[RMDB]
RNA sequence: GGGAACGACUCGAGUAGAGUCGAAAACGGCAGUGGCAUCUUAUCCGUACGUUAUGUGCGGAAUCGCAUCCUAUAAGCGUAGAUGCGAUGUCCAGAGAUGUGCAAGUGAGUAUCCCUGCUCCUAGCAUCUAGUCUUGCUGUUCGCGGCAAGGCUAGAAAAAGAAACAACAACAACAAC
Reactivity to DMS in 0.01 (KOAc 150mM, MgCl2 10mM, bicine 150mM(pH8.5), 24C), signal-to-noise 9, nucleotides 027 to 126: c150g010g010c070a070g010u010g010g010c010a010u000c010u010u000a140u000c010c010g020u000a000c000g020u040u050a060u050g010u000g000c000g000g000a020a010u000c000g000c010a010u000c090c080u010a090u010a120a160g020c260g010u010a050g000a010u000g010c000g000a010u000g000u020c160c090a080g000a010g000a010u000g000u010g000c010a050a030g000u020g000a030g000u000a060u000c010c010c000u010g000c010u000c010c010u010a080g010c100a220
Reactivity to 2A3 in 0.01 (KOAc 150mM, MgCl2 10mM, bicine 150mM(pH8.5), 24C), signal-to-noise 9, nucleotides 027 to 126: c030g070g000c050a070g040u090g100g000c000a010u000c010u020u060a030u040c010c000g000u010a010c020g110u210u300a120u300g010u010g000c000g000g000a000a000u010c000g000c000a000u030c020c060u170a110u080a300a100g120c140g120u070a010g010a010u000g000c000g000a000u000g050u000c010c030a010g000a000g000a020u020g010u030g040c010a010a030g030u040g100a010g010u020a030u030c000c000c000u010g000c000u000c010c000u020a030g030c010a050